[RMDB]
RNA sequence: GGGAACGACUCGAGUAGAGUCGAAAAGGCAUGCCGGGGGGUGGGCACCCGUAAUCGCUCGCAAAACAAUACUUGCCAACAACAAUCUGGCACUCGCAGCUUAAUUAAAUAAGUUGCCGUCCUCUGAGGCUUCGCCUGUGGGCCGAGGCAGGACGUCGUCUAUACUCAACUUCGGUUGAGUAUAGACAAAAGAAACAACAACAACAAC
Reactivity to 2A3 in 0.01 (KOAc 150mM, MgCl2 10mM, bicine 150mM(pH8.5), 24C), signal-to-noise 2, nucleotides 027 to 156: g030g000c040a000u090g040c040c010g010g000g010g000g000g010u020g000g010g010c010a020c010c020c020g080u120a020a060u070c100g000c010u020c010g030c030a050a080a030a030c180a100a120u130a140c040u060u090g030c020c000a010a060c040a050a050c010a040a090u050c050u040g020g010c010a010c100u090c090g010c000a000g010c000u030u020a040a070u100u100a160a160a120u060a080a000g000u010u010g000c000c000g000u000c000c010u000c000u020g010a010g030g000c000u080u090c050g120c040c030u020g010u220g010g000g000c000c000g000a030g000g000c060a000g020g000a000c010g010u010c010